[RMDB]
RNA sequence: GGGAACGACUCGAGUAGAGUCGAAAAUGGCAAGUUCUAUCGGACAGUGCAGGUCUAGAACCUUUGAGCAGCUUUUCCUUGCAUUUAGAAUAAAACCCAAACUUUGUGCAGGCCUACAAGGCCCUGCCCUACUUGAGCUCUUCGGAGCUCAAGUAGGAAAAGAAACAACAACAACAAC
Reactivity to 2A3 in 0.01 (KOAc 150mM, MgCl2 10mM, bicine 150mM(pH8.5), 24C), signal-to-noise 2, nucleotides 027 to 126: u080g050g030c050a040a020g050u080u070c050u120a110u080c070g060g030a040c010a030g000u040g030c040a030g010g010u010c020u090a150g020a140a090c000c010u070u060u180g140a090g000c070a000g050c010u060u000u020u080c000c000u020u030g030c000a050u050u110u100a100g030a100a040u070a150a080a020a030c000c000c000a010a090a080c090u130u130u040g010u060g000c000a010g030g020c000c010u100a150c120a060a140g000g020c050c010c020u010g010c010
Reactivity to DMS in 0.01 (KOAc 150mM, MgCl2 10mM, bicine 150mM(pH8.5), 24C), signal-to-noise 2, nucleotides 027 to 126: u000g000g020c100a070a150g000u000u010c020u000a100u020c120g000g020a020c120a080g040u000g010c060a080g030g030u000c020u010a060g000a070a100c030c040u040u000u010g000a110g030c080a130g000c060u000u010u010u000c010c030u000u010g000c040a040u010u000u000a020g000a060a110u010a040a080a090a110c040c010c020a090a040a150c170u000u000u020g010u000g010c020a070g000g010c010c000u010a060c300a080a110g010g000c170c010c070u000g010c010